[RMDB]
RNA sequence: GGGAACGACUCGAGUAGAGUCGAAAAGAUUAAGUGGGAGCGUCGCCCUUUCGGUGCAUCGGAUAUUAAUUAGCCAGUGCGUGGCACUACGCAUAUUGAUGUCUACUUUGGCGUAGACUUUGCCAAUUUAAGGAUUGAUGGGCAAUCCAGCCCUAGAAAUAGUAUAUGCUUUCGAGCAUAUACUAUUAAAAGAAACAACAACAACAAC
Reactivity to DMS in 0.01 (KOAc 150mM, MgCl2 10mM, bicine 150mM(pH8.5), 24C), signal-to-noise 4, nucleotides 027 to 156: g000a200u000u000a060a120g010u000g020g020g010a090g020c070g030u000c050g010c030c020c040u010u000u000c070g030g030u000g050c030a080u010c050g010g000a060u000a060u010u000a050a130u010u000a160g000c010c040a050g030u000g020c010g030u000g020g020c060a170c030u010a060c000g030c010a130u000a080u000u000g010a080u000g020u000c050u000a090c040u000u000u000g010g030c050g000u010a050g000a060c030u000u010u000g020c010c020a030a050u000u010u000a110a110g000g010a120u000u010g010a120u000g020g000g030c020a060a100u000c080c040a150g000c010c000c010u000a040g010a070
Reactivity to 2A3 in 0.01 (KOAc 150mM, MgCl2 10mM, bicine 150mM(pH8.5), 24C), signal-to-noise 5, nucleotides 027 to 156: g030a040u170u180a100a010g020u110g020g030g000a060g030c040g040u030c030g030c010c030c050u020u060u080c060g020g000u050g010c010a050u090c050g050g010a020u030a030u140u130a190a050u080u090a030g020c020c030a010g030u010g030c030g030u050g060g000c100a020c050u050a010c000g000c000a010u050a080u110u070g100a070u070g030u020c020u020a040c020u060u080u100g050g000c010g010u010a030g020a030c000u070u070u050g000c000c010a020a030u070u090u070a150a040g040g000a040u030u080g040a040u080g020g020g010c010a010a040u020c030c010a010g000c000c000c000u000a020g040a010
The record gives the reactivity of an RNA of 207 nucleotides to DMS and 2A3. 2A3 adducts were read by reverse transcription with SuperScript II with manganese. DMS adducts were read by reverse transcription with MarathonRT. It was measured as part of the RMDB library OK3TST.